[RMDB]
RNA sequence: GGGAACGACUCGAGUAGAGUCGAAAAUGUGGGUAAUUGAGAUUUCACAGAGGGACCCAGUGAGUGGUGUCUGCAGGGCUGGGAUGCCAAACAGUAUGACUUCUUCCAGGGGAUGACGUUGUUCCUGCUGACCUCUGAGCAGGCUGAAGCCUGCCAAUCAUCCAGGCAUAUUCGUAUGCCUGGAUGAAAAAGAAACAACAACAACAAC
Reactivity to DMS in 0.01 (KOAc 150mM, MgCl2 10mM, bicine 150mM(pH8.5), 24C), signal-to-noise 1, nucleotides 027 to 156: u000g040u000g010g020g000u000a060a100u000u000g020a170g000a150u000u000u000c060a140c110a110g010a080g040g020g000a190c040c060c020a080g010u010g030a150g010u010g010g020u010g010u000c020u000g040c020a090g040g020g040c060u010g000g020g000a100u000g000c060c030a050a070a080c120a150g030u010a120u000g000a060c060u000u000c020u000u000c010c060a110g010g000g060g000a100u010g000a070c080g000u000u010g010u000u000c040c000u010g050c070u000g000a140c040c050u000c090u000g000a100g000c010a010g000g000c060u000g000a100a210g000c010c000u010g010c000c050a010a180
Reactivity to 2A3 in 0.01 (KOAc 150mM, MgCl2 10mM, bicine 150mM(pH8.5), 24C), signal-to-noise 2, nucleotides 027 to 156: u120g020u070g000g030g040u120a170a070u130u140g050a080g020a110u070u220u170c110a070c050a060g060a070g060g010g010a030c000c010c020a010g030u050g100a050g010u040g000g040u040g000u050c070u050g000c020a040g000g000g040c020u020g020g070g000a030u050g030c030c010a110a110a040c060a050g090u110a090u130g060a050c020u050u020c000u100u030c070c060a040g010g030g000g000a040u000g010a000c050g020u020u020g030u050u000c010c040u000g010c000u020g030a040c010c000u000c000u010g030a020g030c000a010g020g000c010u100g060a090a020g020c000c010u010g000c020c000a000a060
The record gives the reactivity of an RNA of 207 nucleotides to DMS and 2A3. For 2A3 the reverse transcriptase was SuperScript II with manganese. Values cover nucleotides 27 to 156. For DMS, 2,305 sequencing reads were counted. The 2A3 profile rests on 1,202 reads.